[RMDB]
RNA sequence: GGGAACGACUCGAGUAGAGUCGAAAAAUGUAGGCACACUAUUUCAUAUGGCCUUUAUUAUUUGGAAGGAUGGAUUCCUAAAAAUGAACAUUAGGUAUGUUUACAGUCUGUCACCAUUUUAUUUGCAGACACUGUAGUUCUUCGGAACUACAGUGUCAAAAGAAACAACAACAACAAC
Reactivity to 2A3 in 0.01 (KOAc 150mM, MgCl2 10mM, bicine 150mM(pH8.5), 24C), signal-to-noise 1, nucleotides 027 to 126: a000u080g000u050a050g010g000c030a050c010a020c110u060a060u050u250u080c040a040u060a030u080g070g000c010c000u020u030u070a050u050u020a070u050u040u100g050g020a050a080g050g000a020u130g100g050a080u190u000c000c000u040a080a020a000a020a020u090g020a030a010c020a100u020u070a030g070g040u090a030u160g040u030u070u070a040c020a050g020u050c020u010g040u070c020a040c080c010a050u120u070u000u040a110u010u100u090g050c040a000
Reactivity to DMS in 0.01 (KOAc 150mM, MgCl2 10mM, bicine 150mM(pH8.5), 24C), signal-to-noise 2, nucleotides 027 to 126: a030u000g000u000a040g000g030c010a070c080a070c080u000a070u000u010u000c050a060u010a150u010g080g010c010c010u010u010u010a030u000u000a070u010u010u000g000g000a190a040g000g010a030u000g010g000a170u010u010c020c020u000a040a090a040a060a030u000g000a030a100c190a070u010u000a040g040g040u000a010u000g000u010u000u000a040c050a030g010u000c100u000g000u000c030a110c100c030a100u000u020u000u000a120u000u000u000g000c150a130